[RMDB]
RNA sequence: GGGAACGACUCGAGUAGAGUCGAAAAUGGUGUCUAUGAGUGUCCAACAGAUCAGCAAAUAUGCGUUUCCAAGCCAUGGAGAUACAUGAUGCGUUUUCUGCCUAAUCAAAACCAAUCUAAAGUGUAUUUAAACACCCUAUGUCACUUUGUGCGUGAAUCUUGCACCUUCUUUCGAGAAGGUGCAAGAAAAAGAAACAACAACAACAAC
Reactivity to 2A3 in 0.01 (KOAc 150mM, MgCl2 10mM, bicine 150mM(pH8.5), 24C), signal-to-noise 1, nucleotides 027 to 156: u070g040g070u010g000u000c030u110a210u140g070a020g020u040g010u000c030c010a000a000c000a070g010a030u070c050a020g030c000a000a080a130u110a010u050g030c000g000u060u010u000c000c000a030a060g080c020c010a150u020g000g000a020g000a010u020a050c020a050u060g000a040u020g000c020g050u120u070u000u000c000u020g000c000c020u080a080a040u130c090a050a000a010a040c040c010a040a050u120c000u150a070a020a000g030u070g040u110a100u050u080u050a100a000a000c050a120c000c010c000u050a060u150g090u060c000a010c080u020u020u080g090u120g020c030g030u070g080a020a110
Reactivity to DMS in 0.01 (KOAc 150mM, MgCl2 10mM, bicine 150mM(pH8.5), 24C), signal-to-noise 1, nucleotides 027 to 156: u010g000g000u000g020u000c000u000a200u020g000a130g030u000g000u000c020c000a070a110c060a070g000a020u000c080a110g070c030a080a060a200u000a020u030g000c000g000u020u000u000c030c000a110a270g050c210c130a070u000g000g020a070g000a060u000a040c040a020u010g000a300u010g060c020g000u000u020u000u000c040u000g000c150c010u010a130a060u000c110a060a010a040a150c070c090a060a090u000c080u000a110a100a110g010u000g010u000a120u000u000u000a070a020a090c050a090c000c000c060u000a070u020g020u020c060a020c000u010u000u000g040u020g000c140g030u000g000a030a130